[RMDB]
RNA sequence: GGGAACGACUCGAGUAGAGUCGAAAACCGGCGUCCUAACCCCGUCCCGUGGAGCCGGGCGGGGGACCGUGCCAGGUGGGCAGUUUGACUGGGGCGGUCGCCUCCUAAAAGGUAACGGAGGCGCGCGUCUCACUUAGAUAUUCGUAUCUAAGUGAGAAAAAGAAACAACAACAACAAC
Reactivity to DMS in 0.01 (KOAc 150mM, MgCl2 10mM, bicine 150mM(pH8.5), 24C), signal-to-noise 9, nucleotides 027 to 126: c020c020g010g010c030g000u000c040c030u010a140a240c010c010c000c010g010u030c000c010c020g000u010g020g010a150g020c180c030g000g000g000c010g000g000g010g010g000a010c060c050g020u010g000c010c010a060g010g020u010g010g000g010c050a070g010u010u010u010g010a090c030u000g000g000g000g010c010g000g000u010c010g010c000c010u000c000c020u010a090a080a150a140g010g010u010a100a110c200g000g000a030g010g000c000g010c070g010c070g010
Reactivity to 2A3 in 0.01 (KOAc 150mM, MgCl2 10mM, bicine 150mM(pH8.5), 24C), signal-to-noise 9, nucleotides 027 to 126: c000c000g010g010c010g030u050c020c030u070a060a070c000c000c000c010g110u240c040c030c010g030u100g130g090a050g060c050c000g000g000g000c000g000g000g000g000g010a010c000c010g010u050g120c000c000a010g030g060u140g020g050g010c060a090g030u090u160u160g080a040c020u020g000g000g010g000c000g000g000u040c020g000c000c000u000c000c000u140a190a150a070a060g150g030u050a080a020c040g010g010a010g010g000c000g000c010g000c010g040
Structure probing data (DMS and 2A3) for a 177-nucleotide construct. 2A3 adducts were read by reverse transcription with SuperScript II with manganese. It was measured as part of the RMDB libraries RFM100 and RFMREP.